[RMDB]
RNA sequence: GGGAACGACUCGAGUAGAGUCGAAAAGAUAUGGACACAUUGUGGGAGCGUUGCGGUCGGAAACGACCGUGACGCGAGGAUCACACGGUGUGUCCUAAGUCAAAACUAGUCACUUCGGUGACUAGAAUCCCUACGUUACGUUCGCGUAACGUAGGGAAAAAGAAACAACAACAACAAC
Reactivity to DMS in 0.01 (KOAc 150mM, MgCl2 10mM, bicine 150mM(pH8.5), 24C), signal-to-noise 2, nucleotides 027 to 126: g000a020u000a020u000g000g000a020c010a000c010a020u000u000g050u020g000g010g040a120g050c000g020u000u000g000c000g000g000u010c000g020g020a000a010a040c020g020a020c010c000g040u000g000a000c000g040c010g050a060g040g010a260u010c090a120c000a010c040g010g000u010g020u000g000u000c000c000u000a000a050g000u000c010a090a100a120a260c000u000a010g000u000c000a010c000u000u000c140g060g000u000g000a010c000u000a000g000a120a120
Reactivity to 2A3 in 0.01 (KOAc 150mM, MgCl2 10mM, bicine 150mM(pH8.5), 24C), signal-to-noise 1, nucleotides 027 to 126: g020a010u020a000u050g000g000a000c000a000c010a020u010u000g000u020g030g070g170a300g060c000g000u030u010g030c000g010g000u000c000g000g010a000a000a010c000g010a000c000c000g000u000g020a000c000g000c000g000a000g020g050a140u200c050a010c000a000c040g020g000u000g000u000g010u000c000c000u000a000a000g000u000c000a000a010a090a190c000u010a000g010u020c010a010c000u000u080c300g180g000u010g000a000c000u000a010g000a010a130